Background:
Structure probing data (2A3) for a 207-nucleotide construct. As a SHAPE reagent, 2A3 marks flexible, mostly unpaired nucleotides at the ribose 2'-OH. For 2A3, 804 sequencing reads were counted. The RNA was probed in 150 mM KOAc, 10 mM MgCl2 and 150 mM bicine (pH 8.5) at 24 C. The data come from the RNA Mapping Database (RMDB), library OK3TST.
RNA sequence: GGGAACGACUCGAGUAGAGUCGAAAAGUGUGAGAUCGUGAACGAGAGAUCACUCUCGUUCUCACGUGUUCGUGAGUACACGAACACGAGAGAACGAGAUCUCGAGAACUCGAUCUCUCGAUCACGAGUGAUCGUUCGUGAGUUCUCACACACGUACAGUUGAUAGCGUCUUCGGACGCUAUCAACUAAAAGAAACAACAACAACAAC
Reactivity to 2A3 in 0.01 (KOAc 150mM, MgCl2 10mM, bicine 150mM(pH8.5), 24C), signal-to-noise 1, nucleotides 027 to 156: g000u000g000u020g010a010g000a010u020c060g010u050g050a020a020c000g000a000g010a000g000a050u000c020a040c080u000c000u000c030g000u000u000c000u000c000a000c000g000u000g000u000u010c000g000u010g090a150g250u240a100c000a010c010g020a000a000c000a000c000g000a000g000a020g000a000a000c000g000a000g010a000u030c090u030c020g160a160g090a040a050c100u070c250g110a160u040c020u000c000u000c000g020a020u030c030a030c020g010a000g020u050g020a110u060c080g060u080u050c040g010u070g080a070g040u100u010c000u020c000a000c000a000c000a000c000g050u100a080c020